[RMDB]
RNA sequence: GGGAACGACUCGAGUAGAGUCGAAAAGAUAUGGACGUUUAUCGUCAUUCGAUGCACGACAUGCAGUCUCCUCGGAAACGAGGAGCUGCAACAGCGUGUCAUCGAAUGACGAUAAACGUCCUAAGUCGAUACAUUUAGUGUUCGCACUAAAUGUAUCAAAAGAAACAACAACAACAAC
Reactivity to DMS in 0.01 (KOAc 150mM, MgCl2 10mM, bicine 150mM(pH8.5), 24C), signal-to-noise 4, nucleotides 027 to 126: g010a090u010a300u000g010g010a000c000g040u000u000u000a000u000c000g000u000c000a030u000u010c020g000a020u000g000c010a010c000g010a060c130a260u000g000c000a030g000u010c020u000c000c000u000c000g000g010a100a080a250c000g010a020g000g000a010g020c000u000g000c000a020a020c280a170g010c010g000u000g010u010c020a000u000c000g000a010a000u000g000a010c000g020a000u000a000a000a000c000g000u000c010c000u000a010a050g000u010c080